[RMDB]
RNA sequence: GGGAACGACUCGAGUAGAGUCGAAAACUUACUUAUAGUUUAAUUAUAAGAUUACUAGUGCUUAGUUAUAGUUUACUUAUGGUUUAACUAUAUGAUUACUAGUGCUUAACUAUGUCUUUGCUAUAUCAGCAUACUAUUAGUUCGCUAAUAGUAUGCUAAAAGAAACAACAACAACAAC
Reactivity to DMS in 0.01 (KOAc 150mM, MgCl2 10mM, bicine 150mM(pH8.5), 24C), signal-to-noise 4, nucleotides 027 to 126: c040u000u030a140c040u020u020a000u010a010g010u000u000u010a030a060u040u010a110u010a010a000g000a300u030u020a020c010u000a000g010u010g010c120u030u030a050g000u000u010a030u000a000g010u000u010u010a030c010u020u040a090u050g000g000u000u010u010a000a010c000u000a000u000a010u010g000a070u010u010a010c030u010a020g010u000g000c090u010u010a070a110c110u020a050u020g010u000c090u000u000u000g010c050u010a070u020a040u010c170
Reactivity to 2A3 in 0.01 (KOAc 150mM, MgCl2 10mM, bicine 150mM(pH8.5), 24C), signal-to-noise 9, nucleotides 027 to 126: c000u040u090a030c000u050u060a020u010a030g030u040u020u130a100a080u110u080a100u040a140a000g040a120u100u190a020c000u010a010g080u020g140c040u160u080a030g050u140u070a160u000a040g000u050u050u060a090c010u070u100a060u210g080g020u090u080u040a000a000c000u000a000u000a010u050g070a090u050u110a020c030u020a020g030u010g070c030u080u080a100a040c050u050a060u190g100u100c050u070u150u140g080c060u080a060u000a060u220c090